[RMDB]
RNA sequence: GGGAACGACUCGAGUAGAGUCGAAAAGGGAUAAGAGAGUACUCUUAUCCCCACGUCGUUGGUGACAACGACGAUUAUCCGGUGGCCACCGGCCCGGGCCACCGUUACUCCACUCCACUCCUUCGGGACUGGUUUGGAGGAACAUAACAGGGCUAAAAAUAUCGGUAUGGUUCGCCAUACCGAUAUUAAAAGAAACAACAACAACAAC
Reactivity to 2A3 in 0.01 (KOAc 150mM, MgCl2 10mM, bicine 150mM(pH8.5), 24C), signal-to-noise 1, nucleotides 027 to 156: g000g000g000a010u000a000a050g020a000g060a090g110u260a240c000u040c000u000u000a000u000c000c020c000c000a030c000g000u000c000g000u000u000g000g040u090g010a020c000a000a000c010g020a000c000g000a030u090u070a130u090c040c020g010g000u000g000g000c010c000a030c080c110g020g000c000c000c030g010g000g000c000c000a000c000c000g000u000u090a000c000u010c000c000a010c000u000c000c000a000c010u040c000c050u000u030c170g050g000g000a000c000u000g000g090u020u010u000g000g000a000g000g000a000a000c010a000u260a060a030c060a050g010g000g000c000u000a080a020a000